[RMDB]
RNA sequence: GGGAACGACUCGAGUAGAGUCGAAAAUGGCCUCGUUGCCGCCCACCAAGCCGCGGCCGCGGUCGCCCACGAGAUCUUCGCGGCGCCGGGCGGGAUGUCCGCCACAUUCAAGCUGCCGUUGGGCGAGGACCAUGAGUUGAUUCGUCAACUCAUGGUCAAAAGAAACAACAACAACAAC
Reactivity to DMS in 0.01 (KOAc 150mM, MgCl2 10mM, bicine 150mM(pH8.5), 24C), signal-to-noise 3, nucleotides 027 to 126: u010g030g010c000c020u000c180g000u010u010g000c020c010g000c010c020c060a210c110c120a040a170g010c060c050g020c020g010g000c080c060g000c040g010g000u000c010g010c020c000c020a140c060g010a130g000a100u000c050u000u000c030g020c260g000g010c020g000c020c100g010g010g020c000g010g010g000a110u010g020u000c000c060g010c010c010a120c190a080u000u000c180a110a090g000c030u000g010c010c030g020u000u000g010g030g010c020g030a140g000
Reactivity to 2A3 in 0.01 (KOAc 150mM, MgCl2 10mM, bicine 150mM(pH8.5), 24C), signal-to-noise 3, nucleotides 027 to 126: u070g030g010c030c010u100c090g160u160u180g040c000c010g030c020c010c000a040c030c070a100a020g070c040c010g020c030g040g050c030c030g020c030g000g030u040c030g020c020c040c000a030c050g100a060g060a160u120c090u110u090c170g000c000g060g000c000g030c040c040g000g000g000c020g030g000g000a250u250g090u090c010c010g040c050c020a090c000a090u200u210c050a060a000g000c010u050g030c030c000g070u140u100g040g000g000c030g010a050g010